[RMDB]
RNA sequence: GGGAACGACUCGAGUAGAGUCGAAAACUAGUGCCAUUCGUGGCACUAGAAGGGGUCCAGCCAGGAAAGGCUGGAGGUAUUGGAAUGGUCGGGCCGCCAUUCAAGGUACGCUAUUCGUAGCGUACAAGCACAGGUGCUAAUUCGUUAGCACCUGUGCAAAAGAAACAACAACAACAAC
Reactivity to DMS in 0.01 (KOAc 150mM, MgCl2 10mM, bicine 150mM(pH8.5), 24C), signal-to-noise 1, nucleotides 027 to 126: c020u020a010g040u010g000c010c000a020u000u000c210g050u010g010g010c000a030c000u010a000g010a090a080g000g000g000g000u000c000c000a000g010c030c020a120g000g030a150a170a050g030g020c000u000g060g000a030g000g000u040a110u010u000g010g010a000a010u000g000g000u000c000g000g000g000c000c000g000c000c030a020u000u000c010a150a060g010g010u000a010c010g010c000u010a030u000u000c230g020u000a020g000c000g010u000a000c000a040a080
Reactivity to 2A3 in 0.01 (KOAc 150mM, MgCl2 10mM, bicine 150mM(pH8.5), 24C), signal-to-noise 2, nucleotides 027 to 126: c000u020a010g000u000g010c000c010a020u050u020c280g110u070g000g000c000a000c000u000a000g020a000a010g090g040g000g000u000c000c000a000g020c010c000a080g230g260a300a240a030g000g000c000u000g000g060a010g020g000u130a180u140u260g200g010a020a010u010g020g020u020c030g000g070g000c000c000g000c030c000a000u010u020c000a000a000g170g000u010a000c010g000c000u000a010u080u070c180g060u040a010g000c000g000u010a000c010a010a010
Source information:
The data come from the RNA Mapping Database (RMDB), library M2PK50. This 177-nucleotide RNA was probed chemically with DMS and 2A3. For 2A3 the reverse transcriptase was SuperScript II with manganese. The RNA was probed in 150 mM KOAc, 10 mM MgCl2 and 150 mM bicine (pH 8.5) at 24 C. Values are in units of 0.01, from 0 to 300, in steps of 10. The 2A3 profile rests on 2,249 reads.